[RMDB]
RNA sequence: GGGAACGACUCGAGUAGAGUCGAAAAGCAGAGUCACAGAAUCACUAACACACAACACUCAGGGAGAAAGGCCCGGCUAGGAAGUGGCGAGCCAGCAGGUGGUCGGCUUGUUAGGGCUGUGACAGAGCACCCUCCAACUAUUCGUAGUUGGAGGGUGAAAAGAAACAACAACAACAAC
Reactivity to DMS in 0.01 (KOAc 150mM, MgCl2 10mM, bicine 150mM(pH8.5), 24C), signal-to-noise 2, nucleotides 027 to 126: g020c060a060g000a260g000u010c020a010c020a020g010a080a110u010c060a180c010u000a020a000c010a130c150a130c130a090a050c040a120c050u000c070a170g010g030g000a060g010a070a090a150g040g000c010c000c010g000g030c030u010a080g020g000a080a040g020u000g000g000c090g000a090g020c000c020a040g020c070a060g000g040u000g000g020u000c040g010g010c140u010u010g010u010u010a030g020g000g020c000u000g000u000g000a040c010a060g000a240g000
Reactivity to 2A3 in 0.01 (KOAc 150mM, MgCl2 10mM, bicine 150mM(pH8.5), 24C), signal-to-noise 1, nucleotides 027 to 126: g000c010a020g020a020g170u010c020a010c000a000g050a040a130u110c040a030c260u020a050a000c030a000c000a000c000a130a040c020a040c040u100c080a060g070g070g000a110g100a070a090a030g080g000c000c010c000g030g000c040u070a090g000g110a090a020g040u040g020g000c030g000a010g000c010c000a030g000c000a010g000g170u090g030g000u080c040g070g000c060u000u060g000u010u010a020g000g000g040c020u020g000u000g000a010c000a000g030a000g010

Annotation:
Chemical mapping of a 177-nucleotide RNA with DMS and 2A3. The DMS profile rests on 1,567 reads. For DMS the reverse transcriptase was MarathonRT.